Structure probing data (DMS) for a 177-nucleotide construct.
RNA sequence: GGGAACGACUCGAGUAGAGUCGAAAAACGACGUCGGCAUCACCCUCCAUUACUGUCCUUCCGAGGUGAAGGAUGCCGUCCAGUUCCGGAAAAGGAUCAAGAGAAUGGCGAAGAACGUGGCACGUGAUCAGGGAAACACUUUCGAGUGUUUCCCUGAAAAAGAAACAACAACAACAAC
Reactivity to DMS in 0.01 (KOAc 150mM, MgCl2 10mM, bicine 150mM(pH8.5), 24C), signal-to-noise 1, nucleotides 027 to 126: a070c090g010a130c240g010u020c010g010g000c050a090u020c000a120c030c050c000u000c010c030a130u010u010a090c150u040g010u000c020c000u010u000c110c080g010a020g040g020u010g000a090a060g000g000a020u010g000c000c030g000u010c000c020a100g010u000u010c050c000g010g010a060a040a090a120g020g000a040u000c020a090a040g000a190g020a120a030u000g000g020c010g010a060a070g030a110a020c150g010u010g000g000c080a080c120g020u000g000a080
For DMS the reverse transcriptase was MarathonRT. The DMS profile rests on 732 reads. Reactivities are given for positions 27 through 126.